Chemical mapping of a 177-nucleotide RNA with DMS and 2A3. The data come from the RNA Mapping Database (RMDB), library M2PK90. For 2A3 the reverse transcriptase was SuperScript II with manganese. The reactions ran in a buffer of 150 mM KOAc, 10 mM MgCl2 and 150 mM bicine (pH 8.5), at 24 C.
RNA sequence: GGGAACGACUCGAGUAGAGUCGAAAAAAAUUAUGGUCGCCGGCACGUAUGUGCACACCGAGAAUGACACUCUUUCGCCGUCAACCGUGUCGCUAGUCUUGCACAUCAGGAAUCCGUCUGCGUUGAAUUACAUCUUCACAUUCGUGUGAAGAUGUAAAAAAGAAACAACAACAACAAC
Reactivity to DMS in 0.01 (KOAc 150mM, MgCl2 10mM, bicine 150mM(pH8.5), 24C), signal-to-noise 4, nucleotides 027 to 126: a080a060a060u020u010a060u010g010g000u010c050g020c040c060g010g010c060a060c080g000u000a040u010g020u010g010c020a100c180a080c090c040g000a050g010a080a070u010g000a030c050a040c040u000c060u000u000u000c060g000c030c040g000u000c040a040a060c070c050g000u010g000u000c040g010c050u000a050g020u000c030u000u000g020c040a030c040a060u010c050a070g010g000a080a080u000c040c030g010u000c050u000g000c100g020u000u010g020a070a110
Reactivity to 2A3 in 0.01 (KOAc 150mM, MgCl2 10mM, bicine 150mM(pH8.5), 24C), signal-to-noise 2, nucleotides 027 to 126: a030a000a010u200u090a050u060g050g000u060c060g010c010c000g000g040c020a010c090g170u190a040u230g040u020g040c030a010c000a000c000c040g060a020g140a120a050u080g020a020c020a040c080u050c020u040u160u090c120g030c100c020g010u050c030a050a030c000c030g010u010g010u060c010g040c030u040a010g070u000c040u030u030g000c050a040c000a110u040c020a040g020g050a070a140u030c030c010g010u020c080u010g050c000g130u050u060g010a000a020